Source: RMDB libraries RFM100 and RFMREP, as collected in RNAgym. Chemical mapping of a 177-nucleotide RNA with 2A3 and DMS. 2A3 adducts were read by reverse transcription with SuperScript II with manganese. The RNA was probed in 150 mM KOAc, 10 mM MgCl2 and 150 mM bicine (pH 8.5) at 24 C. DMS adducts were read by reverse transcription with MarathonRT.
[RMDB]
RNA sequence: GGGAACGACUCGAGUAGAGUCGAAAACUCGGCAAGCGUGAUGGGGCUUGCUUUCAGCGCUCUUCAGAUCUCUGAAAAGAGUCGGUGCAUUCAUUAAAGCUACGUAAUGCGACGAUCUUGUUUGCAGCACGCUAGCGGAAUUCGUUCCGCUAGCGUGAAAAGAAACAACAACAACAAC
Reactivity to 2A3 in 0.01 (KOAc 150mM, MgCl2 10mM, bicine 150mM(pH8.5), 24C), signal-to-noise 2, nucleotides 027 to 126: c000u000c000g030g000c010a030a000g000c050g140u160g070a140u140g060g000g040g000c000u000u000g010c000u000u050u010c000a030g010c020g030c020u000c000u060u040c000a000g040a260u080c120u010c040u100g030a040a050a040a020g040a000g050u050c040g000g030u040g000c000a010u000u090c000a000u040u220a190a080a110g090c070u020a000c140g120u220a010a080u040g000c000g000a000c000g000a020u050c010u010u140g010u120u010u050g080c010a000g010
Reactivity to DMS in 0.01 (KOAc 150mM, MgCl2 10mM, bicine 150mM(pH8.5), 24C), signal-to-noise 1, nucleotides 027 to 126: c030u000c000g040g010c010a030a080g000c060g030u020g030a030u050g000g030g040g000c030u000u000g000c010u000u000u010c060a040g010c130g020c070u000c000u000u010c230a030g010a140u050c080u000c020u000g000a110a120a180a140g010a040g050u000c070g010g040u000g000c030a060u000u000c050a030u010u000a010a180a170g000c130u000a040c180g020u040a060a000u000g000c000g000a050c010g000a050u000c030u000u000g040u060u000u020g000c040a090g000